[RMDB]
RNA sequence: GGGAACGACUCGAGUAGAGUCGAAAAGGUACAACGUUCGCGUUGUACCAAAUAAGGCAACCUUCGUGGUGACGAGAAUAAUUGAGUGCUCGCCCUCAUAAAAAACAAUCCCCUUCGGGGGAUUGAACAUAAAAUCUGGGUUCGCCCAGAUUUUAUGAAAAGAAACAACAACAACAAC
Reactivity to 2A3 in 0.01 (KOAc 150mM, MgCl2 10mM, bicine 150mM(pH8.5), 24C), signal-to-noise 1, nucleotides 027 to 126: g010g000u010a000c010a000a000c020g030u050u070c190g000c000g130u010u030g000u000a000c000c000a010a000a000u070a010a020g060g000c000a040a040c000c020u030u120c090g070u090g030g070u070g020a030c010g000a020g070a100a060u170a150a090u120u250g100a050g090u050g080c030u060c040g030c010c020c000u010c030a050u250a060a150a040a000a000a000c000a000a000u010c000c000c000c030u010u070c070g010g000g000g000g000a000u000u000g000a000a000
Reactivity to DMS in 0.01 (KOAc 150mM, MgCl2 10mM, bicine 150mM(pH8.5), 24C), signal-to-noise 2, nucleotides 027 to 126: g000g010u000a010c000a010a000c000g020u000u010c250g050c030g020u000u010g000u000a000c010c010a000a010a020u000a080a070g000g020c090a060a090c010c030u000u010c070g010u010g010g010u000g000a040c030g000a040g000a080a080u000a090a110u010u010g000a100g000u000g000c040u000c010g010c000c020c040u000c050a100u010a000a030a050a070a060a150c010a010a000u000c000c000c000c000u000u000c120g040g010g000g000g010a000u000u000g000a070a150